[RMDB]
RNA sequence: GGGAACGACUCGAGUAGAGUCGAAAAGAUAUGGAUUGUGGGAGUCGCGGAUCGGAAACGAUCCCUACGACGACGAUCACACGGUCCUAAGUCAAAACCCACGCUGACGUUCGCGUCAGCGUGGGAAGUACGGUAGAAAGUUCGCUUUCUACCGUACAAAAGAAACAACAACAACAAC
Reactivity to DMS in 0.01 (KOAc 150mM, MgCl2 10mM, bicine 150mM(pH8.5), 24C), signal-to-noise 3, nucleotides 027 to 126: g010a030u000a300u010g000g000a000u000u000g010u000g010g000g010a190g010u000c000g000c170g000g000a000u010c010g000g000a090a060a150c020g000a010u000c000c010c100u020a050c060g000a090c010g000a070c120g010a230u010c090a140c010a020c130g000g000u000c000c000u010a050a150g020u000c020a060a070a130a130c000c000c000a000c020g000c000u020g000a010c000g040u000u010c210g020c010g030u000c000a000g000c020g020u000g000g000g000a010a040
Reactivity to 2A3 in 0.01 (KOAc 150mM, MgCl2 10mM, bicine 150mM(pH8.5), 24C), signal-to-noise 3, nucleotides 027 to 126: g010a010u090a030u170g000g010a010u030u010g000u010g010g040g010a060g030u010c000g010c060g030g000a010u010c000g010g010a050a060a040c000g010a000u020c010c000c000u150a090c060g220a040c020g010a030c030g140a200u090c030a040c000a010c220g000g000u000c000c010u040a160a020g050u040c020a000a030a070a250c000c010c020a000c000g030c010u000g000a010c000g090u130u110c300g070c000g200u040c000a000g010c000g000u020g000g010g000a000a010